[RMDB]
The data come from the RNA Mapping Database (RMDB), library M2PK90. Structure probing data (2A3 and DMS) for a 177-nucleotide construct. 2A3 adducts were read by reverse transcription with SuperScript II with manganese. For DMS, 15,778 sequencing reads were counted. The reactions ran in a buffer of 150 mM KOAc, 10 mM MgCl2 and 150 mM bicine (pH 8.5), at 24 C.
RNA sequence: GGGAACGACUCGAGUAGAGUCGAAAAUUUAAGAGCGUAGAUGUCUCUGUCACGAUACGAGUAAGUGACUCUCGUGUACUACUGUCGAAUGAGACAGAGACAUUUAUGCUCAGUGUCAGUCAAGGAACAACGUAAAAUGGUUCGCCAUUUUACGUUGAAAAGAAACAACAACAACAAC
Reactivity to 2A3 in 0.01 (KOAc 150mM, MgCl2 10mM, bicine 150mM(pH8.5), 24C), signal-to-noise 8, nucleotides 027 to 126: u140u130u080a180a040g000a010g020c010g000u000a010g000a010u010g000u000c000u010c000u000g000u010c010a010c090g030a010u060a070c040g010a020g030u050a160a110g040u090g220a060c010u010c010u020c100g130u110g040u070a050c020u020a020c010u050g100u170c030g070a110a120u180g030a100g000a100c000a000g000a000g000a000c000a000u000u010u000a000u000g000c000u000c010a000g000u000g040u040c070a040g030u050c060a060a060g100g010a100a080
Reactivity to DMS in 0.01 (KOAc 150mM, MgCl2 10mM, bicine 150mM(pH8.5), 24C), signal-to-noise 7, nucleotides 027 to 126: u000u010u010a100a100g000a010g010c000g030u010a010g000a010u000g000u000c000u000c000u010g000u000c000a120c060g000a100u000a080c060g000a080g020u010a020a100g010u010g010a060c070u000c180u010c150g000u010g010u000a030c040u000a040c060u000g000u000c020g010a110a070u010g010a130g010a010c000a010g000a010g000a010c000a000u000u000u000a010u000g010c000u000c000a040g010u000g000u010c080a080g010u000c100a070a080g000g010a100a210